The data come from the RNA Mapping Database (RMDB), library 15KLIB. An RNA of 170 nucleotides, treated with 2A3 and DMS and read out base by base. For DMS, 4,774 sequencing reads were counted. For 2A3 the reverse transcriptase was SuperScript II with manganese.
RNA sequence: GGGAACGACUCGAGUAGAGUCGAAAAGGAGAGGGGAACCGAGGGGGGUUCGAACUCAAGAAGAGAAGAUUUUCGAGGAAAUACUCCCAAGAAGUUCCCGGAGGGAUCCAAGAGACGGACGACUUUCGCACCGCUCUCUUCGGAGAGCGGAAAAGAAACAACAACAACAAC
Reactivity to 2A3 in 0.01 (KOAc 150mM, MgCl2 10mM, bicine 150mM(pH8.5), 24C), signal-to-noise 2, nucleotides 027 to 129: g030g030a050g020a080g050g020g000g000a010a020c000c010g030a100g000g020g010g000g000g000u010u050c080g030a060a000c000u000c080a060a040g040a110a000g020a010g030a170a080g000a040u030u040u010u010c020g020a010g010g000a070a040a030u130a070c000u060c000c010c000a010a000g080a030a020g020u020u010c030c000c030g010g000a060g000g000g020a040u010c010c020a010a050g000a030g000a040c030g030g000a030c010g040a060c080u130u150u040c040g020c090a080
Reactivity to DMS in 0.01 (KOAc 150mM, MgCl2 10mM, bicine 150mM(pH8.5), 24C), signal-to-noise 3, nucleotides 027 to 129: g010g030a070g030a070g000g020g030g000a040a020c030c020g060a140g040g040g020g000g000g050u030u060c000g000a150a150c060u000c000a000a010g030a050a030g000a110g020a130a100g040a100u050u000u040u000c030g080a080g000g000a000a000a000u040a120c060u010c050c110c110a080a070g000a130a130g000u070u000c020c000c030g010g020a040g030g000g130a110u020c040c000a040a010g000a030g000a000c040g000g040a120c040g000a100c170u030u030u000c070g030c070a060